[RMDB]
RNA sequence: GGGAACGACUCGAGUAGAGUCGAAAAACAUAAAUGAUAGAGGUGAAGAUCAGUCAAAUUCGAUAUCAGGGUUACCUGGUCCACUAUUACCCAGCCGUGACCUAAAUCUUUCAGGUGAUUCAUAUGGUCUUGUGAUAGCGUUCGCGCUAUCACAAGAAAAAGAAACAACAACAACAAC
Reactivity to 2A3 in 0.01 (KOAc 150mM, MgCl2 10mM, bicine 150mM(pH8.5), 24C), signal-to-noise 1, nucleotides 027 to 126: a020c090a070u200a060a110a090u140g050a010u070a130g110a000g000g050u070g020a150a030g040a050u040c020a000g130u010c050a010a130a110u160u070c060g060a040u020a060u230c110a050g050g040g000u050u010a030c030c020u050g050g000u040c100c000a090c060u100a090u100u130a090c000c010c010a010g090c060c030g070u030g020a050c000c030u000a090a130a070u070c040u010u100u090c050a030g110g030u030g130a050u070u090c040a030u100a090u240g110g010
Reactivity to DMS in 0.01 (KOAc 150mM, MgCl2 10mM, bicine 150mM(pH8.5), 24C), signal-to-noise 1, nucleotides 027 to 126: a080c040a100u020a070a040a120u000g010a090u000a070g010a070g030g010u000g010a120a110g000a030u000c070a120g070u010c090a050a040a070u010u000c130g000a090u020a050u010c090a090g000g020g010u000u000a120c140c000u010g010g020u000c090c050a020c030u000a060u000u000a080c060c010c000a030g000c110c050g010u010g020a110c020c000u000a050a050a100u030c050u000u000u000c120a070g010g010u010g000a060u000u000c140a060u010a090u000g000g000
This 177-nucleotide RNA was probed chemically with 2A3 and DMS. Reactivities are given for positions 27 through 126. 2A3 adducts were read by reverse transcription with SuperScript II with manganese. Conditions: 150 mM KOAc, 10 mM MgCl2 and 150 mM bicine (pH 8.5), 24 C. For DMS the reverse transcriptase was MarathonRT. Source: RMDB library OK2TRN, as collected in RNAgym.